[RMDB]
Chemical mapping of a 177-nucleotide RNA with 2A3 and DMS. The DMS profile rests on 1,679 reads. Values are in units of 0.01, from 0 to 300, in steps of 10. DMS adducts were read by reverse transcription with MarathonRT. The 2A3 profile rests on 1,593 reads.
RNA sequence: GGGAACGACUCGAGUAGAGUCGAAAAGGUAGAUUAGGGGGACCAGUCAAUAAGGCAAAGGUGGAUGCUUACAAGUUGGGACCAAUUCCUGCUAUCAAAGACAAACCUGUGGCAGAUGACAAACCAAACCAUCAAUUACCUUCGGGUAAUUGAUGGUAAAAGAAACAACAACAACAAC
Reactivity to 2A3 in 0.01 (KOAc 150mM, MgCl2 10mM, bicine 150mM(pH8.5), 24C), signal-to-noise 1, nucleotides 027 to 126: g020g000u040a020g000a230u160u160a100g000g020g000g000g000a020c010c010a000g020u030c010a010a080u060a150a010g070g000c040a010a120a000g040g010u020g030g000a020u090g030c010u050u030a040c020a130a000g010u090u040g020g000g000a050c030c000a040a040u100u020c010c000u010g040c020u050a040u160c050a110a040a010g030a060c020a050a070a010c000c000u000g000u040g010g000c010a010g010a140u040g030a020c090a060a020a000c020c030a090a090
Reactivity to DMS in 0.01 (KOAc 150mM, MgCl2 10mM, bicine 150mM(pH8.5), 24C), signal-to-noise 3, nucleotides 027 to 126: g020g020u000a050g000a160u000u000a130g050g020g010g020g020a160c040c040a060g010u020c040a100a100u010a140a100g030g000c040a040a110a050g000g020u010g020g000a060u010g000c030u000u000a100c140a020a090g000u000u000g000g000g000a090c100c120a080a110u010u000c010c000u010g010c020u000a080u000c070a060a080a100g010a050c170a040a100a110c110c030u010g000u010g000g010c040a030g000a080u010g000a070c140a010a040a070c050c050a090a100
It was measured as part of the RMDB library OK2TST.
Conditions: 150 mM KOAc, 10 mM MgCl2 and 150 mM bicine (pH 8.5), 24 C.